[RMDB]
RNA sequence: GGGAACGACUCGAGUAGAGUCGAAAAGGCGCCUAUGUAAAAUACGGCGAUUCAAUAGUGUUUGUUAAUGAAUAUGUCGAUGGUGUAAAGCAUGGUGAUAGUUAUCAAUAUGACGUUGUUAGUGGUAAUGUAAUUUAUCAUUGUUAUUAUGUCGAUGGAGACAUAACCCAUUCGUGGGUUAUGUCUCAAAAGAAACAACAACAACAAC
Reactivity to 2A3 in 0.01 (KOAc 150mM, MgCl2 10mM, bicine 150mM(pH8.5), 24C), signal-to-noise 2, nucleotides 027 to 156: g040g000c090g030c080c030u080a060u090g140u140a130a140a180a040u160a160c120g000g040c000g010a040u130u090c100a010a040u080a120g040u050g050u050u140u080g010u040u100a050a100u070g050a050a090u130a090u150g000u020c000g000a060u080g000g000u000g010u080a020a090a010g040c020a080u080g010g010u010g000a010u040a110g050u060u000a070u120c000a000a050u050a060u300g050a030c070g020u030u000g020u020u070a030g010u000g000g000u040a050a020u070g120u130a010a180u040u090u120a020u050c030a010u040u080g030u020u010a080u070u110a080u180g020u000c010g030a010u240g030
Reactivity to DMS in 0.01 (KOAc 150mM, MgCl2 10mM, bicine 150mM(pH8.5), 24C), signal-to-noise 1, nucleotides 027 to 156: g030g030c080g020c030c000u000a080u020g020u000a170a130a110a130u000a080c070g020g020c010g000a120u000u010c050a040a130u010a110g010u000g010u000u010u000g010u000u000a100a070u000g010a080a030u000a060u010g000u000c040g000a060u000g020g030u010g010u010a100a070a070g020c050a060u010g030g030u000g050a070u000a050g020u000u010a080u000c060a080a090u000a100u010g010a020c030g010u000u030g020u000u000a040g020u000g000g030u000a040a010u010g020u010a060a070u000u010u000a010u000c010a100u010u000g030u000u000a050u000u000a050u000g000u000c010g030a300u020g030